[RMDB]
RNA sequence: GGGAACGACUCGAGUAGAGUCGAAAAGAGGCCGAGACAGGAAGAUCACUUGAGUCGAGGAGCUCAAGACCAGCCUGAGCAACAUAGCAACACCCCAUCUCUACAAGAAAUAAUAAAUAGCUGGGCAUGGUGGUGUGUACCUGUAAUUCCAGCUACACGUAAUAGUCCAGUUCGCUGGACUAUUACGAAAAGAAACAACAACAACAAC
Reactivity to DMS in 0.01 (KOAc 150mM, MgCl2 10mM, bicine 150mM(pH8.5), 24C), signal-to-noise 1, nucleotides 027 to 156: g000a100g000g050c030c030g000a130g010a110c110a080g000g000a130a000g000a050u000c020a160c030u000u000g010a060g040u000c030g050a160g060g030a140g030c010u010c040a040a040g000a110c030c000a050g000c000c000u010g000a110g010c070a060a110c060a110u000a090g030c050a100a060c060a070c010c000c000c010a070u000c020u000c000u000a130c110a070a120g000a090a070a120u000a100a100u010a080a070a120u000a070g010c000u020g000g010g070c120a110u000g040g010u000g020g040u000g000u000g030u000a020c030c000u030g000u000a050a110u010u010c020c000a070g000c010u010a050c030a070
Reactivity to 2A3 in 0.01 (KOAc 150mM, MgCl2 10mM, bicine 150mM(pH8.5), 24C), signal-to-noise 2, nucleotides 027 to 156: g070a000g040g000c050c050g030a010g040a080c060a000g050g000a050a050g020a090u070c040a050c050u010u040g030a030g020u080c040g070a080g030g030a070g000c000u010c030a010a030g060a070c030c000a020g000c000c000u000g030a040g030c040a000a100c020a090u110a020g050c020a030a000c030a030c060c020c000c000a070u000c060u030c010u100a070c030a050a020g080a110a170a010u250a010a050u170a070a090a040u030a020g000c000u020g020g020g000c030a040u100g010g090u030g030g000u010g020u000g010u030a030c000c010u010g010u090a040a110u110u000c000c000a000g020c030u020a030c020a000
Structure probing data (DMS and 2A3) for a 207-nucleotide construct. The reactions ran in a buffer of 150 mM KOAc, 10 mM MgCl2 and 150 mM bicine (pH 8.5), at 24 C. Source: RMDB library OK3TST, as collected in RNAgym. DMS (dimethyl sulfate) methylates the pairing face of unpaired adenines and cytosines.